Structure probing data (DMS and 2A3) for a 177-nucleotide construct. The reactions ran in a buffer of 150 mM KOAc, 10 mM MgCl2 and 150 mM bicine (pH 8.5), at 24 C. For 2A3, 10,282 sequencing reads were counted. Reactivities are given for positions 27 through 126. For DMS the reverse transcriptase was MarathonRT.
[RMDB]
RNA sequence: GGGAACGACUCGAGUAGAGUCGAAAAGUGAAGGUGUUCAGGAGAGAUAAGCCAUUCCCAUCUAGGAAAUACUGUGUUGACACCAAAGUGAUCGGAGAGGAUCUCUUCCAUUGCAAACUGGGGGGAAUAACUACCUCUAUUUCGAUAGAGGUAGUUAAAAAGAAACAACAACAACAAC
Reactivity to DMS in 0.01 (KOAc 150mM, MgCl2 10mM, bicine 150mM(pH8.5), 24C), signal-to-noise 8, nucleotides 027 to 126: g010u020g010a090a050g030g020u000g020u020u000c080a070g010g010a040g010a070g000a070u020a050a100g010c030c040a120u000u010c010c000c020a110u020c110u020a110g020g000a100a060a070u020a080c080u010g020u020g010u010u010g010a080c070a050c070c050a040a100a100g030u020g000a020u010c150g000g000a070g020a060g010g010a080u010c020u000c010u010u000c010c050a060u020u020g000c120a070a070a050c100u010g000g000g000g000g000g010a080a110
Reactivity to 2A3 in 0.01 (KOAc 150mM, MgCl2 10mM, bicine 150mM(pH8.5), 24C), signal-to-noise 9, nucleotides 027 to 126: g130u150g050a080a030g050g010u040g030u110u100c050a030g060g020a060g030a010g010a080u050a150a010g030c010c020a050u020u020c020c000c000a030u050c050u090a050g080g090a040a080a070u150a100c080u040g040u020g070u150u110g040a020c020a010c040c020a000a070a030g080u090g030a020u030c030g030g040a050g010a030g130g050a060u040c020u000c000u080u030c010c020a030u050u160g040c060a100a080a050c050u030g000g000g000g010g010g010a020a060